[RMDB]
RNA sequence: GGGAACGACUCGAGUAGAGUCGAAAAUUAAUUGAAUUAUCAGCCUACUACAAGACCUUUAAUCAGAACCAGCGUUAACGGACGGUAAAUCGUCAGGCCAGUACAUUUAGAGGUGCAAGGCACUUUGAAAUGCAGGUCUUUAGGUUGCGCGGUCAGCCCCACCAUUUACAUUCGUGUAAAUGGUGGGAAAAGAAACAACAACAACAAC
Reactivity to 2A3 in 0.01 (KOAc 150mM, MgCl2 10mM, bicine 150mM(pH8.5), 24C), signal-to-noise 2, nucleotides 027 to 156: u130u120a050a080u050u130g090a010a050u140u120a080u170c020a010g030c020c000u060a040c030u060a080c090a100a030g040a150c030c030u050u210u200a060a040u100c100a060g000a140a020c060c000a040g030c010g000u020u190a000a010c010g010g000a000c000g000g000u060a150a060a010u110c000g000u000c000a000g030g000c000c000a040g040u100a060c000a060u000u030u070a030g000a000g040g000u000g000c080a120a060g180g000c000a030c000u010u030u050g040a010a010a010u030g000c060a060g000g000u020c000u080u090u010a050g030g010u010u020g000c030g000c000g030g020u000c000a050g060c000